[RMDB]
RNA sequence: GGGAACGACUCGAGUAGAGUCGAAAAGUAGCAAUUUUAUUGAAGAUUCAAGUUUGAUUGACCUUUGUUAGGGUGAUUAACCUUUCUGAAAUUAAAAGCCAGAGCUGAAUUAUUCUGUCCAAUUUAACAUCGUGUAUAGGUUCGCCUAUACACGAUGAAAAGAAACAACAACAACAAC
Reactivity to DMS in 0.01 (KOAc 150mM, MgCl2 10mM, bicine 150mM(pH8.5), 24C), signal-to-noise 2, nucleotides 027 to 126: g000u010a100g010c040a080a080u010u000u000u000a050u020u010g000a170a060g000a030u010u000c130a020a090g000u000u000u000g020a060u020u000g000a030c030c010u000u000u000g020u000u040a030g010g000g000u000g010a040u000u010a050a030c050c060u000u000u000c030u000g000a150a040a090u010u010a040a040a080a140g010c110c040a050g010a060g020c080u000g000a040a090u000u000a030u000u000c040u000g000u010c030c040a080a120u010u010u000a040a160
Reactivity to 2A3 in 0.01 (KOAc 150mM, MgCl2 10mM, bicine 150mM(pH8.5), 24C), signal-to-noise 1, nucleotides 027 to 126: g060u160a000g010c070a120a080u030u050u060u000a060u120u080g020a050a040g030a080u100u100c070a060a030g000u010u050u060g040a010u000u020g150a080c010c000u020u040u130g180u150u240a010g000g000g010u020g020a010u020u000a000a020c000c000u020u040u010c000u010g020a000a020a100u050u040a060a060a070a040g080c030c040a030g030a000g000c070u020g020a070a030u100u000a040u230u080c040u100g040u000c050c020a070a110u030u120u140a210a010